[RMDB]
RNA sequence: GGGAACGACUCGAGUAGAGUCGAAAAAUGACAUUCGUGUCAUCAGGACUCCUAAGUCAAGGCGAGGAUCGAUACCGGAGACAUGCUAUUCGGAAACGAAUAGCAACAGCUCCGAAUCGGGAGCCUUGAUAUGGAUAGCGAGAAGCUUCGGCUUCAAGGUUAAAGUAAAUUUCGAUUUACUUUAACCAAAAGAAACAACAACAACAAC
Reactivity to DMS in 0.01 (KOAc 150mM, MgCl2 10mM, bicine 150mM(pH8.5), 24C), signal-to-noise 3, nucleotides 027 to 156: a010u010g010a040c010a080u000u000c300g040u010g040u000c010a030u000c040a110g010g000a160c100u010c000c020u000a100a300g010u000c020a030a040g010g010c010g010a120g010g000a070u010c000g010a030u000a080c090c000g020g010a050g020a100c090a300u000g020c000u010a000u000u000c000g000g020a170a120a240c020g010a030a030u000a030g030c000a010a030c060a120g020c010u000c000c000g010a030a040u000c010g010g000g000a140g010c000c000u000u010g000a030u000a100u010g010g000a070u000a060g030c040g010a200g000a070a060g030c000u000u000c150g070g000c010u010u000c010a060a270
Reactivity to 2A3 in 0.01 (KOAc 150mM, MgCl2 10mM, bicine 150mM(pH8.5), 24C), signal-to-noise 7, nucleotides 027 to 156: a000u020g010a000c010a020u050u150c300g070u080g020u030c000a030u050c070a050g110g090a100c060u010c020c000u060a150a040g020u000c000a000a000g000g000c010g050a220g060g020a030u010c000g010a000u020a150c140c000g000g010a000g010a040c030a030u040g000c000u000a000u000u000c000g050g000a070a060a070c010g000a010a000u000a000g010c000a000a010c020a000g020c000u000c000c000g000a010a000u010c000g000g010g000a000g000c000c000u000u000g000a000u000a000u010g020g000a020u070a070g130c110g070a120g020a090a000g000c000u070u140c240g100g000c010u010u010c060a050a080

Background: This 207-nucleotide RNA was probed chemically with DMS and 2A3. DMS adducts were read by reverse transcription with MarathonRT. Values are in units of 0.01, from 0 to 300, in steps of 10. For 2A3, 12,365 sequencing reads were counted. The data come from the RNA Mapping Database (RMDB), library RNAMAK. The reactions ran in a buffer of 150 mM KOAc, 10 mM MgCl2 and 150 mM bicine (pH 8.5), at 24 C. 2A3 adducts were read by reverse transcription with SuperScript II with manganese.